[RMDB]
RNA sequence: GGGAACGACUCGAGUAGAGUCGAAAACUGUCCUGUGUGGAAGUAGGUGACUACUUCACGCUCUACGGGAGUAGAGCCACACAGAUCGUGGAGCGAUGUCUUGGAACUACUCCCGUAGUUCACGUAUGACUCACGUCAUACCAAGACGACAGCCACGUAUAGUAGUGGUAUUCGUACCACUACUAUAAAAAGAAACAACAACAACAAC
Reactivity to DMS in 0.01 (KOAc 150mM, MgCl2 10mM, bicine 150mM(pH8.5), 24C), signal-to-noise 5, nucleotides 027 to 156: c020u010g000u000c020c010u010g050u000g040u010g020g010a030a010g040u000a020g000g010u010g010a300c010u000a020c000u000u000c010a100c070g020c020u000c010u000a020c000g020g020g000a300g010u000a010g000a080g030c000c010a030c080a050c020a060g000a040u010c030g020u010g020g000a190g010c030g010a060u010g010u000c010u010u010g030g010a040a050c010u000a020c010u000c110c150c140g030u000a000g000u000u000c030a150c110g010u000a020u000g000a030c000u000c190a170c300g010u000c000a020u000a020c000c020a060a070g000a050c010g020a070c040a060g000c000c030a070c060g010
Reactivity to 2A3 in 0.01 (KOAc 150mM, MgCl2 10mM, bicine 150mM(pH8.5), 24C), signal-to-noise 9, nucleotides 027 to 156: c010u020g020u030c010c010u040g000u000g010u030g120g080a030a020g010u000a010g010g090u100g090a100c000u010a000c000u000u010c010a020c020g010c000u010c000u000a000c010g050g020g020a050g000u000a000g000a010g020c000c000a010c000a000c000a010g050a040u030c020g020u070g170g160a120g140c030g030a040u070g040u050c040u060u040g030g010a050a080c000u010a000c010u040c020c030c030g000u000a000g000u020u040c070a050c050g000u000a000u000g010a010c010u060c190a060c150g000u000c000a000u000a010c010c000a020a030g030a030c040g010a010c010a010g020c010c020a060c060g040